[RMDB]
RNA sequence: GGGAACGACUCGAGUAGAGUCGAAAAGAUAUGGAAAUCUCCCCACCGCUAUAGCUCGAUGAAAUCGGAAACGAUGGAGAGCAAGUAGCGAGGAUUUCCUAAGUCAAAACCUCGCUUCGGCGAGGAAGAUCACUAUUAUCUUCGGAUAAUAGUGAUCAAAAGAAACAACAACAACAAC
Reactivity to DMS in 0.01 (KOAc 150mM, MgCl2 10mM, bicine 150mM(pH8.5), 24C), signal-to-noise 7, nucleotides 027 to 126: g010a110u000a210u010g000g000a010a020a020u000c020u000c140c010c010c050a300c110c000g000c000u010a010u000a140g010c000u000c010g000a130u010g010a080a110a030u000c000g000g000a110a070a130c010g010a030u000g000g000a060g010a020g010c010a100a100g010u000a000g000c000g000a100g020g000a020u010u000u000c000c010u000a060a140g010u010c110a060a060a100a110c000c000u000c010g020c000u000u010c190g020g000c000g000a020g010g000a010a030
Reactivity to 2A3 in 0.01 (KOAc 150mM, MgCl2 10mM, bicine 150mM(pH8.5), 24C), signal-to-noise 8, nucleotides 027 to 126: g020a060u180a140u210g000g010a010a010a020u020c040u120c040c030c010c010a020c010c010g000c010u020a020u040a050g000c000u010c030g300a300u060g020a040a030a010u020c010g040g030a090a040a030c010g000a010u010g000g020a020g000a000g000c000a030a030g040u010a000g000c000g000a010g000g000a000u000u000u000c000c000u020a140a020g150u140c090a030a040a150a250c000c000u000c010g010c010u070u110c300g170g000c000g000a010g000g000a000a010